Conditions: 150 mM KOAc, 10 mM MgCl2 and 150 mM bicine (pH 8.5), 24 C. This 207-nucleotide RNA was probed chemically with 2A3. 2A3 adducts were read by reverse transcription with SuperScript II with manganese.
RNA sequence: GGGAACGACUCGAGUAGAGUCGAAAAUCAAUUGAACAAAAGCGAAUGCGAACGGCAGUGUCGCUCUAUCAACUCUACGAUCGUCGAAGUGGAAAACAUCGACUUUGUCAAGCGUUGGACUGACGAUUUUCACGUCGACCUUUAUGCCGUCGGCAACCAAAGGGCGGCAUUUCGAUGCCGCCCUUUGAAAAGAAACAACAACAACAAC
Reactivity to 2A3 in 0.01 (KOAc 150mM, MgCl2 10mM, bicine 150mM(pH8.5), 24C), signal-to-noise 1, nucleotides 027 to 156: u100c110a000a110u000u090g080a140a110c080a030a030a150a000g080c020g020a170a000u060g010c020g090a030a030c030g050g060c010a010g030u000g050u200c000g000c080u010c010u100a080u110c000a000a150c060u010c000u170a070c000g130a070u100c000g000u000c000g020a010a030g060u000g050g180a220a010a000a000c130a220u000c030g060a090c150u020u090u070g060u050c080a030a030g020c050g160u220u190g000g000a000c000u030g020a030c030g000a000u100u000u000u050c180a110c040g030u000c010g020a050c020c060u210u130u110a150u100g010c010c010g000u000c000g050g010c000a070a110c000
Record summary: For 2A3, 302 sequencing reads were counted.